RNA sequence: GGGAACGACUCGAGUAGAGUCGAAAAAACAGCUGCACGUACGUACGAGCAGUUUUCGAAAUAAACGUACGUACGAAAUAAAUAAAUUCUACUCGAUGCGAAACAAAGGAAAGUCGUUCCCAGGGAACGUGACGAUCUGUUUCGACAGAUCGUCACGAAAAGAAACAACAACAACAAC
Reactivity to 2A3 in 0.01 (KOAc 150mM, MgCl2 10mM, bicine 150mM(pH8.5), 24C), signal-to-noise 1, nucleotides 027 to 126: a000a000c100a000g030c030u200g000c040a020c110g000u010a000c000g000u000a000c000g020a040g130c080a040g000u000u020u030u050c090g050a110a010a000u130a020a090a030c000g020u030a000c000g000u010a000c020g050a030a000a000u100a000a050a020u200a000a070a000u000u000c010u010a010c000u020c010g000a050u080g090c110g030a060a090a050c050a000a150a020g100g010a160a010a040g000u000c000g000u040u020c000c000c020a020g000g050g000a160a000
Source information
The data come from the RNA Mapping Database (RMDB), library M2PK90. The record gives the reactivity of an RNA of 177 nucleotides to 2A3. The 2A3 profile rests on 927 reads. For 2A3 the reverse transcriptase was SuperScript II with manganese. The RNA was probed in 150 mM KOAc, 10 mM MgCl2 and 150 mM bicine (pH 8.5) at 24 C.